Chemical mapping of a 177-nucleotide RNA with DMS. The reactions ran in a buffer of 150 mM KOAc, 10 mM MgCl2 and 150 mM bicine (pH 8.5), at 24 C.

[RMDB]
RNA sequence: GGGAACGACUCGAGUAGAGUCGAAAACUGGAUUCUUUCGAGAAUCCAGCAUGUCUAGUCGCUAGCGAACGAUCAACGCUACCGACUAGACUUUAUUGAUCGCAUUUGCCUCUUUCGAGAGGCAAAAUUGACCUCUCAACUUCGGUUGAGAGGUCAAAAAAGAAACAACAACAACAAC
Reactivity to DMS in 0.01 (KOAc 150mM, MgCl2 10mM, bicine 150mM(pH8.5), 24C), signal-to-noise 1, nucleotides 027 to 126: c010u000g000g000a040u000u000c000u000u030u010c160g030a050g010a000a000u010c000c000a000g000c140a090u000g000u000c020u000a030g000u000c010g030c250u000a000g030c000g000a140a110c090g000a090u000c110a140a100c000g000c000u000a030c160c000g020a010c000u000a000g000a000c000u000u000u010a090u000u000g000a090u020c160g020c210a210u000u010u000g030c020c010u010c000u000u000u020c260g020a000g000a020g020g000c000a000a000a000a060
Source information
For DMS the reverse transcriptase was MarathonRT.